[RMDB]
RNA sequence: GGGAACGACUCGAGUAGAGUCGAAAAAGCAGGAGUACGCUCCUGCAUGGGUAGACGAAUUCACCCCAACUGAAGUUCAAUUCUAACGUUAAAAGGAGUUUUAUAUGACUGGACGUACGCGUCCAGAUGACGAUUUCAUUCUUCGGAAUGAAAUCAACACAUUAUAUGCCUUCGGGCAUAUAAUGUGAAAAGAAACAACAACAACAAC
Reactivity to 2A3 in 0.01 (KOAc 150mM, MgCl2 10mM, bicine 150mM(pH8.5), 24C), signal-to-noise 3, nucleotides 027 to 156: a010g000c000a000g000g010a000g000u040a020c170g010c080u000c010c010u000g000c000a000u020g020g000g020u080a100g050a140c080g050a060a060u140u090c030a020c020c010c010c000a040a050c080u170g050a080a030g050u160u180c030a040a080u070u030c040u140a060a100c070g100u130u160a070a040a020a040g080g020a090g020u050u040u120u080a160u020a060u170g140a060c010u000g000g040a000c000g020u050a030c160g020c050g070u000c000c000a000g000a000u040g030a020c120g000a000u000u000u000c000a000u000u000c000u040u040c110g070g010a000a000u000g000a010a010a000u010c000a040a000
Reactivity to DMS in 0.01 (KOAc 150mM, MgCl2 10mM, bicine 150mM(pH8.5), 24C), signal-to-noise 2, nucleotides 027 to 156: a110g010c010a000g000g000a040g060u000a130c260g040c000u020c000c010u020g000c000a010u020g010g010g000u000a120g020a180c100g010a070a150u000u000c030a070c020c000c010c060a020a140c060u020g000a090a190g000u020u000c120a060a080u000u000c010u000a070a150c100g020u000u000a090a080a100a130g040g000a100g040u000u000u000u020a110u010a090u030g010a170c000u000g000g000a040c000g010u000a060c240g020c020g030u000c010c000a040g010a050u000g000a120c100g000a040u010u000u000c000a020u000u000c000u000u000c300g040g000a030a000u000g000a010a000a000u000c010a070a200